The data come from the RNA Mapping Database (RMDB), library OK2TRN. An RNA of 177 nucleotides, treated with DMS and 2A3 and read out base by base. High DMS reactivity at an A or C suggests that its Watson-Crick edge is free. The RNA was probed in 150 mM KOAc, 10 mM MgCl2 and 150 mM bicine (pH 8.5) at 24 C.

[RMDB]
RNA sequence: GGGAACGACUCGAGUAGAGUCGAAAACGCUCGAUCCGGAGCCGACGCGCUGGCUCGCGGUGUUCGGCGGCGCGACGAACGUCGCUUCGCUCGACGCGGUCGCGGCGACGCGCCUGCGCGUCGUCGAAUAGGUCAUACGUUUCGACGUAUGACCUAUAAAAGAAACAACAACAACAAC
Reactivity to DMS in 0.01 (KOAc 150mM, MgCl2 10mM, bicine 150mM(pH8.5), 24C), signal-to-noise 2, nucleotides 027 to 126: c120g010c010u000c020g000a140u010c050c010g000g000a050g000c030c010g000a020c060g010c050g000c040u000g010g020c020u000c040g010c010g020g000u000g010u000u010c070g010g020c010g000g020c100g020c010g000a050c020g010a100a140c060g000u000c160g000c060u000u000c070g010c040u000c020g010a070c020g020c080g020g020u000c020g020c050g000g000c030g000a050c030g000c100g010c050c020u010g000c020g000c000g010u010c000g000u000c070g010a110
Reactivity to 2A3 in 0.01 (KOAc 150mM, MgCl2 10mM, bicine 150mM(pH8.5), 24C), signal-to-noise 2, nucleotides 027 to 126: c040g010c010u010c040g140a160u080c060c050g060g010a020g000c000c010g020a030c010g020c010g010c050u060g020g010c040u020c080g050c020g020g180u100g040u120u110c040g050g000c010g060g000c000g000c040g000a050c010g050a200a050c060g150u090c050g000c060u090u070c050g030c070u100c030g130a140c000g020c030g090g000u060c050g010c030g010g020c040g050a050c020g030c020g030c000c030u030g020c010g000c000g010u010c000g000u000c000g040a020